[RMDB]
RNA sequence: GGGAACGACUCGAGUAGAGUCGAAAAUAGUAGCCGAAGCGACAGCGCAAAGGGGGCGAGGGGUGGUCCUGCGGGCGCGAGGAAGGACACCCGAAGAAAGGAAGGGUGAAAACCCUGUUUCGGCGGGCAUAUGUCUUUCGUUCGCGAAAGACAUAUGAAAAGAAACAACAACAACAAC
Reactivity to DMS in 0.01 (KOAc 150mM, MgCl2 10mM, bicine 150mM(pH8.5), 24C), signal-to-noise 2, nucleotides 027 to 126: u000a100g030u020a090g000c020c030g030a090a060g010c020g020a060c150a140g030c070g000c060a070a110a160g020g020g000g000g000c050g020a060g020g000g020g030u000g010g010u000c030c020u000g010c050g020g020g020c080g010c040g010a110g020g000a100a030g000g000a100c050a100c030c000c020g010a070a040g010a040a030a050g010g020a130a060g000g010g000u000g010a060a030a110a060c000c000c010u000g010u000u000u000c000g000g030c040g010g000g010